[RMDB]
RNA sequence: GGGAACGACUCGAGUAGAGUCGAAAACGAAAAGGACGACGAAGGCAACGUCGCACGCGGCCGUGUGUGCUUCGAGCAGGCAUCGUCGACGUUCGCGCAUUCGGAAGGACGCCUGAUCGCCUGCGUAGAUGACCGUCAGUUUCGACUGACGGUCAUCAAAAGAAACAACAACAACAAC
Reactivity to DMS in 0.01 (KOAc 150mM, MgCl2 10mM, bicine 150mM(pH8.5), 24C), signal-to-noise 2, nucleotides 027 to 126: c030g010a050a050a230a100g000g010a100c060g010a140c030g000a050a030g000g010c080a090a090c000g000u010c010g000c130a030c060g010c050g000g020c000c070g010u020g020u030g040u010g000c030u010u010c160g000a100g040c000a100g050g060c010a100u010c110g000u000c000g010a060c020g000u000u000c090g000c070g020c010a070u000u000c060g010g030a130a120g030g000a110c140g000c000c000u010g000a260u000c090g000c010c010u000g000c090g020u000a050
Reactivity to 2A3 in 0.01 (KOAc 150mM, MgCl2 10mM, bicine 150mM(pH8.5), 24C), signal-to-noise 1, nucleotides 027 to 126: c020g030a000a000a000a000g030g020a000c020g000a010c020g020a050a000g080g020c030a030a000c010g030u000c000g000c060a000c020g080c010g000g130c030c070g060u100g000u020g020u040g020c000u050u140c090g030a050g010c000a030g020g070c000a000u010c000g010u000c010g050a060c000g000u020u040c080g050c040g020c120a230u050u000c010g030g030a050a050g090g030a040c060g010c020c010u040g030a030u000c070g010c010c020u040g030c060g050u140a000
Source information: The record gives the reactivity of an RNA of 177 nucleotides to DMS and 2A3. Source: RMDB library OK2TRN, as collected in RNAgym. DMS adducts were read by reverse transcription with MarathonRT. The DMS profile rests on 1,197 reads.